RNA sequence: GGGAACGACUCGAGUAGAGUCGAAAACGAUCCGAUCCUAGGGUACCACGCCAUGCGAUCCGAUCAUCGGUACACAUGCUAGGCCAUGUACGCUAGCAUGAUCACAUGCAUGGAUCACGACUAGUAGCAUGCUGCCGAUAUUCGUAUCGGCAGCAUGAAAAGAAACAACAACAACAAC
Reactivity to DMS in 0.01 (KOAc 150mM, MgCl2 10mM, bicine 150mM(pH8.5), 24C), signal-to-noise 4, nucleotides 027 to 126: c200g050a050u000c040c040g000a160u000c070c010u000a080g020g000g030u000a080c090c090a130c140g010c040c040a020u000g020c020g000a060u000c110c070g000a110u000c100a030u000c060g020g000u010a120c190a070c020a020u010g000c000u000a090g010g030c100c020a050u000g000u000a080c150g000c000u000a020g010c050a010u000g000a040u000c060a050c060a090u000g000c040a080u000g000g000a070u010c070a090c060g000a090c060u000a040g000u010a100g010
Reactivity to 2A3 in 0.01 (KOAc 150mM, MgCl2 10mM, bicine 150mM(pH8.5), 24C), signal-to-noise 3, nucleotides 027 to 126: c030g020a070u000c030c020g000a050u040c010c020u030a020g090g030g010u080a060c040c020a080c150g020c020c030a010u020g000c000g040a070u030c000c050g010a040u120c070a060u050c040g030g030u100a050c060a000c010a150u010g000c030u180a090g180g000c040c020a120u180g060u140a050c160g010c040u010a060g020c010a010u020g000a040u030c020a020c020a120u160g020c000a010u060g030g000a020u060c070a030c090g150a070c030u060a010g060u030a030g090